An RNA of 177 nucleotides, treated with DMS and 2A3 and read out base by base. The reactions ran in a buffer of 150 mM KOAc, 10 mM MgCl2 and 150 mM bicine (pH 8.5), at 24 C. For 2A3 the reverse transcriptase was SuperScript II with manganese. The data come from the RNA Mapping Database (RMDB), library M2PK50.

RNA sequence: GGGAACGACUCGAGUAGAGUCGAAAAGGUCGUCUUUUCGAAGACGACCACUGUCGUACCCAAAACUUUUCGAAACAUGUCGAAAGACAUGCUGAAACAGAAUUGGUGUGUGUUUCGACACACACAAACGUUUAAUGCAGUUCGCUGCAUUAAACGUAAAAGAAACAACAACAACAAC
Reactivity to DMS in 0.01 (KOAc 150mM, MgCl2 10mM, bicine 150mM(pH8.5), 24C), signal-to-noise 4, nucleotides 027 to 126: g010g010u000c000g020u000c000u000u000u000u030c190g010a030a030g010a020c000g010a000c000c010a010c090u010g030u000c010g030u000a120c000c010c010a060a080a140a220c100u000u000u000u000c030g000a160a100a140c000a000u000g000u000c010g020a130a100a120g000a010c000a000u000g000c040u020g010a050a040a040c240a080g000a090a090u020u010g010g010u000g000u000g020u000g010u000u000u010c150g000a040c010a000c000a010c000a010c010a020a080
Reactivity to 2A3 in 0.01 (KOAc 150mM, MgCl2 10mM, bicine 150mM(pH8.5), 24C), signal-to-noise 4, nucleotides 027 to 126: g010g000u000c010g000u000c000u030u050u030u130c230g100a010a000g000a010c010g000a000c000c000a010c010u040g000u000c010g020u030a060c010c000c000a010a030a030a090c050u080u080u060u070c030g050a030a070a050c000a000u010g000u000c000g040a080a010a010g010a000c000a000u010g000c020u070g020a040a040a010c090a080g170a160a180u190u240g110g000u030g000u000g000u000g010u010u070u100c160g030a010c000a010c010a000c000a000c000a020a010